[RMDB]
RNA sequence: GGGAACGACUCGAGUAGAGUCGAAAAUGAAAGCUCUGUGAGCGAGGCGGGCGGAGGAUGAGGCCGUGCCCGGGCUCUGGCUGCAGCCGCCCGGGGACACGCCGUGCACCCUCGGGCUCCGGAAAAAUUGUUCUUUGAAUUUCGAUUCAAAGAACAAAAAAGAAACAACAACAACAAC
Reactivity to DMS in 0.01 (KOAc 150mM, MgCl2 10mM, bicine 150mM(pH8.5), 24C), signal-to-noise 2, nucleotides 027 to 126: u010g000a100a110a110g010c030u010c020u010g010u000g010a040g020c030g020a080g000g010c030g020g010g000c020g020g010a040g000g020a030u000g000a150g000g010c060c070g000u000g000c010c000c000g000g010g000c030u010c170u030g050g000c060u010g030c240a100g010c030c050g000c000c010c000g000g010g000g010a080c010a020c100g000c000c020g020u020g010c020a040c030c010c000u000c010g010g030g020c030u000c000c020g000g000a020a040a060a100a100